[RMDB]
RNA sequence: GGGAACGACUCGAGUAGAGUCGAAAAUGACGGGUUCGAAGUCGACAUCGAGGUGUUCACCACGCGGCCCGACACCUUGUUCGGCGCCACGUAUCUGGUGCUGGCUCCCGAGCACGACUUGGUCGACGAAGCGGCAUGUGUUCGCACAUGCCGCUUCAAAAGAAACAACAACAACAAC
Reactivity to 2A3 in 0.01 (KOAc 150mM, MgCl2 10mM, bicine 150mM(pH8.5), 24C), signal-to-noise 1, nucleotides 027 to 126: u210g070a050c170g000g060g000u060u060c000g060a150a000g010u000c040g020a000c010a080u040c000g000a110g000g000u030g010u020u030c080a160c180c020a030c000g000c000g010g000c010c010c010g000a080c000a010c010c060u110u180g100u100u000c030g000g000c090g000c040c000a000c030g000u050a190u010c100u070g070g010u060g010c120u030g010g040c010u060c000c000c000g000a010g030c010a040c130g090a030c050u000u000g010g050u100c000g000a010c080
Structure probing data (2A3) for a 177-nucleotide construct.
Source: RMDB library OK1LIB, as collected in RNAgym.
For 2A3 the reverse transcriptase was SuperScript II with manganese.
Conditions: 150 mM KOAc, 10 mM MgCl2 and 150 mM bicine (pH 8.5), 24 C.